Structure probing data (DMS and 2A3) for a 177-nucleotide construct.
The DMS profile rests on 15,423 reads.
Values cover nucleotides 27 to 126.
The RNA was probed in 150 mM KOAc, 10 mM MgCl2 and 150 mM bicine (pH 8.5) at 24 C.
Values are in units of 0.01, from 0 to 300, in steps of 10.
Source: RMDB library OK1LIB, as collected in RNAgym.
2A3 adducts were read by reverse transcription with SuperScript II with manganese.
RNA sequence: GGGAACGACUCGAGUAGAGUCGAAAAGAGUAAAUAGAGGAGUCAGGGUUCGCACCAGCUCCGCGAACCUAGGGUAACACUGACUGUGGAGCGUAAGAGAGAGCAGACGAAGAUACGUCUGCAUAGACAGUGAUCAGUGAUUCGUCACUGAUCACUGAAAAGAAACAACAACAACAAC
Reactivity to DMS in 0.01 (KOAc 150mM, MgCl2 10mM, bicine 150mM(pH8.5), 24C), signal-to-noise 6, nucleotides 027 to 126: g000a110g000u020a040a060a090u000a100g000a080g000g000a040g010u010c050a130g010g000g020u000u000c000g000c050a110c100c080a150g010c090u010c030c100g000c010g010a020a010c020c020u010a110g010g000g010u010a070a080c110a160c070u000g000a070c040u000g030u030g010g000a040g000c050g010u020a080a110g000a140g010a100g000a110g000c000a010g000a010c000g000a170a150g010a210u030a090c010g000u000c000u010g010c010a010u020a030g010a200
Reactivity to 2A3 in 0.01 (KOAc 150mM, MgCl2 10mM, bicine 150mM(pH8.5), 24C), signal-to-noise 8, nucleotides 027 to 126: g050a010g050u190a030a100a080u190a080g080a040g140g030a030g030u070c060a040g030g000g010u010u020c000g000c010a050c040c040a050g030c020u030c020c020g000c000g000a010a000c000c010u040a030g050g080g020u060a070a020c060a020c080u060g040a020c010u060g030u110g060g010a030g000c050g040u100a180a020g060a000g010a010g010a020g060c000a000g010a000c020g030a100a050g060a210u180a160c010g000u000c000u000g000c000a000u010a010g050a010